[RMDB]
An RNA of 177 nucleotides, treated with DMS and read out base by base.
RNA sequence: GGGAACGACUCGAGUAGAGUCGAAAAGAUAUGGACUCAGGGAGCGUCGCAUCGGAAACGAUGUAGACGCGACGAUCUGAGGUCCUAAGUCAAAAGGGGGGACCCAUGUUCGCAUGGGUCCCCCCAACAAAGGCGAAUAGUUCGCUAUUCGCCUUUGAAAAGAAACAACAACAACAAC
Reactivity to DMS in 0.01 (KOAc 150mM, MgCl2 10mM, bicine 150mM(pH8.5), 24C), signal-to-noise 2, nucleotides 027 to 126: g000a070u010a300u000g000g000a280c000u000c020a000g000g000g000a010g020c010g030u000c000g000c000a000u000c000g010g000a080a050a160c000g010a020u000g000u000a020g040a020c000g010c010g000a020c270g000a030u000c000u000g000a020g010g010u000c000c000u020a030a130g000u010c030a070a090a130a120g020g020g020g020g000g020a020c000c000c000a010u000g010u000u010c240g010c010a030u000g000g030g030u010c000c010c000c000c000c010a000a030
High DMS reactivity at an A or C suggests that its Watson-Crick edge is free.